[RMDB]
Chemical mapping of a 170-nucleotide RNA with 2A3 and DMS.
RNA sequence: GGGAACGACUCGAGUAGAGUCGAAAAUCCAACCUGCGGGCCGGCUACUCUUCUUUUCCUUUCCUCGUCAUCCUGGGUCAACCUCUUAAGUUCCUCUUCCUCCUCCUUGCUGAGGUUCUUCCCUCCCAAACAGAUAUCUUCGGAUAUCUGAAAAGAAACAACAACAACAAC
Reactivity to 2A3 in 0.01 (KOAc 150mM, MgCl2 10mM, bicine 150mM(pH8.5), 24C), signal-to-noise 9, nucleotides 027 to 129: u030c000c000a020a060c010c020u060g020c020g020g010g020c010c020g020g010c010u060a070c030u030c010u080u060c010u040u060u040u060c010c000u030u040u020c000c010u020c010g060u030c030a090u050c010c040u060g020g000g010u040c020a060a110c030c020u060c020u090u080a090a030g010u040u030c000c000u020c000u050u020c000c020u020c000c000u020c000c000u020u040g000c030u040g030a050g030g060u030u020c000u020u020c000c000c000u030c000c000c000a040a080a040
Reactivity to DMS in 0.01 (KOAc 150mM, MgCl2 10mM, bicine 150mM(pH8.5), 24C), signal-to-noise 9, nucleotides 027 to 129: u010c000c000a130a130c070c040u040g000c040g000g020g010c000c020g010g000c030u000a100c050u000c070u000u030c030u030u020u020u020c050c040u010u000u010c020c020u030c030g010u000c010a040u030c030c060u040g020g000g030u000c040a100a120c060c030u000c060u030u030a090a130g030u000u000c040c000u000c040u030u020c030c000u000c010c010u000c020c030u010u000g030c070u010g020a120g000g020u020u020c050u020u010c030c000c000u010c020c010c020a080a090a160
The RNA was probed in 150 mM KOAc, 10 mM MgCl2 and 150 mM bicine (pH 8.5) at 24 C. Values cover nucleotides 27 to 129. DMS adducts were read by reverse transcription with MarathonRT. 2A3 is a SHAPE reagent: it acylates the 2'-hydroxyl of flexible nucleotides of all four kinds. The data come from the RNA Mapping Database (RMDB), library 15KLIB. For 2A3, 103,503 sequencing reads were counted.